[RMDB]
RNA sequence: GGGAACGACUCGAGUAGAGUCGAAAAGAUAUGGAAGCUAAGACGCCUUCGCUAUGAAGUCCCAGUCUCGCUCGGAAACGAGCGAGACUGGGAUGGAGCGAAGGAACUACGUUAUGCUUCCUAAGUCGAGUAGGUAAAGGUUCGCCUUUACCUACUCAAAAGAAACAACAACAACAAC
Reactivity to 2A3 in 0.01 (KOAc 150mM, MgCl2 10mM, bicine 150mM(pH8.5), 24C), signal-to-noise 1, nucleotides 027 to 126: g050a000u180a090u230g000g000a000a020g000c010u080a270a160g150a050c020g000c020c000u000u030c030g000c010u280a300u300g050a040a040g000u020c000c000c000a020g010u040c010u020c010g160c010u020c100g150g070a120a170a100c020g050a030g040c060g020a000g000a020c000u000g000g090g010a000u010g020g010a010g000c010g010a020a000g010g030a000a010c000u170a000c040g000u000u020a080u120g000c000u000u050c000c000u040a170a020g130u080c130
Reactivity to DMS in 0.01 (KOAc 150mM, MgCl2 10mM, bicine 150mM(pH8.5), 24C), signal-to-noise 1, nucleotides 027 to 126: g010a090u000a300u000g010g010a000a000g000c000u000a160a210g000a070c000g010c000c020u000u000c010g030c000u000a150u020g030a180a300g010u000c000c000c000a000g020u010c030u010c000g060c000u000c000g020g000a090a170a280c000g060a020g030c000g010a000g000a000c000u000g000g020g000a000u000g000g000a040g000c000g010a040a000g000g000a000a040c110u010a300c010g010u000u000a300u000g000c060u000u000c000c000u000a040a140g010u000c090